[RMDB]
RNA sequence: GGGAACGACUCGAGUAGAGUCGAAAAGAUAUGGAUCGUGUAUACUAGCAACAGCUUGAAUCGGAAACGAUUCAAGACAUGCUAAUACGACGAUCCUAAGUCAAAGUCUUGGCUUCGGCCAAGACAAGUCGUAGACUUUCUUCGGAAAGUCUACGACAAAAGAAACAACAACAACAAC
Reactivity to DMS in 0.01 (KOAc 150mM, MgCl2 10mM, bicine 150mM(pH8.5), 24C), signal-to-noise 1, nucleotides 027 to 126: g000a040u010a300u040g070g020a000u020c000g000u030g000u000a160u000a190c210u030a000g010c000a010a170c300a100g000c000u000u000g000a010a000u000c000g040g000a110a100a180c050g000a020u000u000c000a000a010g000a040c110a210u000g000c000u020a020a030u000a020c040g010a010c000g000a000u000c000c000u000a000a110g020u000c050a230a130a150g000u000c000u000u000g000g000c010u000u000c120g050g000c040c000a000a000g020a000c010a040a050
Reactivity to 2A3 in 0.01 (KOAc 150mM, MgCl2 10mM, bicine 150mM(pH8.5), 24C), signal-to-noise 1, nucleotides 027 to 126: g030a000u040a010u090g000g000a000u000c040g000u000g030u030a050u010a140c300u170a050g000c070a120a120c060a210g050c000u000u020g000a000a000u000c000g040g030a000a090a120c000g010a000u000u000c010a000a000g000a010c000a060u300g000c020u000a080a000u040a050c300g030a000c010g000a040u000c000c000u010a070a010g040u010c020a270a110a000g000u000c000u010u010g010g000c020u060u070c300g160g000c000c000a000a000g000a020c020a020a020
Description: This 177-nucleotide RNA was probed chemically with DMS and 2A3. For DMS the reverse transcriptase was MarathonRT.